[RMDB]
RNA sequence: GGGAACGACUCGAGUAGAGUCGAAAACGAUGAGGGGAGAAGAGAAGUGGGCAGGUGGGUCGAAGACGCCCGCCCCACGGCGAACGCCCGUCGCCUGUUUGCAUGCGGGGGUCAGACCCCCUUACCGGCAUGAUAAUGGGUUCGCCCAUUAUCAUGCAAAAGAAACAACAACAACAAC
Reactivity to DMS in 0.01 (KOAc 150mM, MgCl2 10mM, bicine 150mM(pH8.5), 24C), signal-to-noise 2, nucleotides 027 to 126: c120g010a060u010g010a090g000g000g000g000a110g010a100a080g010a050g000a080a100g010u000g030g020g000c130a040g000g010u000g020g000g010u000c020g010a080a160g010a050c020g010c010c000c010g040c040c170c160c070a040c090g000g010c010g020a050a080c150g010c050c070c050g000u000c020g000c000c000u010g010u000u020u010g020c130a090u000g010c030g010g000g000g010g010u000c070a160g010a150c050c010c000c010c000u000u000a060c060c050g010
Reactivity to 2A3 in 0.01 (KOAc 150mM, MgCl2 10mM, bicine 150mM(pH8.5), 24C), signal-to-noise 1, nucleotides 027 to 126: c030g050a110u110g000a060g000g040g000g010a080g000a090a040g070a030g020a090a010g090u160g030g030g040c080a040g040g000u140g030g040g000u020c020g040a090a080g020a000c070g250c060c000c000g000c000c030c030c000a010c030g000g010c010g010a050a000c060g090c060c050c020g030u010c000g000c000c000u110g050u060u140u120g100c090a050u130g000c000g000g000g000g020g000u000c000a010g020a060c000c000c000c000c000u000u030a020c000c030g090

Overview: Chemical mapping of a 177-nucleotide RNA with DMS and 2A3. For DMS, 1,734 sequencing reads were counted. For 2A3, 1,502 sequencing reads were counted.